[RMDB]
RNA sequence: GGGAACGACUCGAGUAGAGUCGAAAAGAUAUGGAGAAUCCAUAGGCUUGGAUUUAUGGUCGGAAACGACCAUUGUCAGCCUCAUGGAAUUCUCCUAAGUCAAAACUAACCUCUUCGGAGGUUAGAACCUAUGUUGCUAGUUCGCUAGCAACAUAGGAAAAGAAACAACAACAACAAC
Reactivity to 2A3 in 0.01 (KOAc 150mM, MgCl2 10mM, bicine 150mM(pH8.5), 24C), signal-to-noise 1, nucleotides 027 to 126: g040a000u060a060u230g000g000a020g000a000a010u020c010c000a000u010a000g010g000c050u100u300g270g020a070u300u300u160a020u030g000g000u000c000g000g040a030a090a070c010g020a000c010c000a000u000u000g000u020c000a000g030c010c000u020c000a000u020g000g000a110a020u010u010c000u000c000c000u000a120a010g030u020c020a000a000a230a000c000u000a000a010c000c010u030c030u100u100c300g170g000a000g020g000u000u000a000g000a000a000
Reactivity to DMS in 0.01 (KOAc 150mM, MgCl2 10mM, bicine 150mM(pH8.5), 24C), signal-to-noise 3, nucleotides 027 to 126: g010a020u010a300u020g000g020a030g030a020a020u000c010c000a020u000a030g000g020c010u010u020g010g010a020u000u000u010a000u000g010g010u010c000g020g000a130a110a270c000g020a010c000c010a000u000u000g010u010c010a040g020c000c000u000c300a000u020g000g000a070a090u000u000c000u000c000c010u000a020a070g000u000c030a060a080a150a250c000u000a000a000c010c000u000c000u000u000c200g010g000a020g000g010u000u000a000g010a100a260
Conditions: 150 mM KOAc, 10 mM MgCl2 and 150 mM bicine (pH 8.5), 24 C. This 177-nucleotide RNA was probed chemically with 2A3 and DMS. For 2A3, 4,618 sequencing reads were counted. 2A3 adducts were read by reverse transcription with SuperScript II with manganese. For DMS, 2,589 sequencing reads were counted. Source: RMDB library TTRDES, as collected in RNAgym.